[RMDB]
RNA sequence: GGGAACGACUCGAGUAGAGUCGAAAAUGUCUGACGCGCUCGAACAGCACGGCACUGUUGCAGUUCAUUUCAGGGUUUGGACCUGUGCGCGCGCGCAAGCUGCAGCAACUUCUGUUUUUGCGCAGACUGCGCUCCUACCUUUCGAGGUAGGAGCGCAAAAAGAAACAACAACAACAAC
Reactivity to DMS in 0.01 (KOAc 150mM, MgCl2 10mM, bicine 150mM(pH8.5), 24C), signal-to-noise 1, nucleotides 027 to 126: u000g010u000c040u010g000a230c040g000c010g020c070u000c120g010a040a010c020a000g010c250a090c200g000g000c100a210c080u000g030u010u000g010c000a060g010u000u000c130a150u010u010u010c020a020g000g000g020u000u020u010g030g010a150c000c020u000g000u000g000c050g000c000g000c200g030c000g000c020a110a050g000c020u030g010c020a020g020c020a050a070c040u000u000c050u010g000u000u000u000u000u000g000c020g000c020a090g000a010c020
Reactivity to 2A3 in 0.01 (KOAc 150mM, MgCl2 10mM, bicine 150mM(pH8.5), 24C), signal-to-noise 2, nucleotides 027 to 126: u080g020u000c030u010g080a150c080g010c020g030c040u080c060g000a030a010c030a000g020c070a040c180g000g040c060a000c160u000g000u050u050g010c000a000g030u060u160c090a100u130u160u180c050a060g040g060g120u190u300u290g160g150a150c000c000u000g010u010g030c020g000c000g000c000g010c000g010c060a000a000g000c000u000g010c000a000g000c010a180a300c030u090u020c020u040g060u040u000u010u050u060g020c030g040c030a010g020a000c010
The record gives the reactivity of an RNA of 177 nucleotides to DMS and 2A3. For 2A3 the reverse transcriptase was SuperScript II with manganese. Values cover nucleotides 27 to 126. The RNA was probed in 150 mM KOAc, 10 mM MgCl2 and 150 mM bicine (pH 8.5) at 24 C.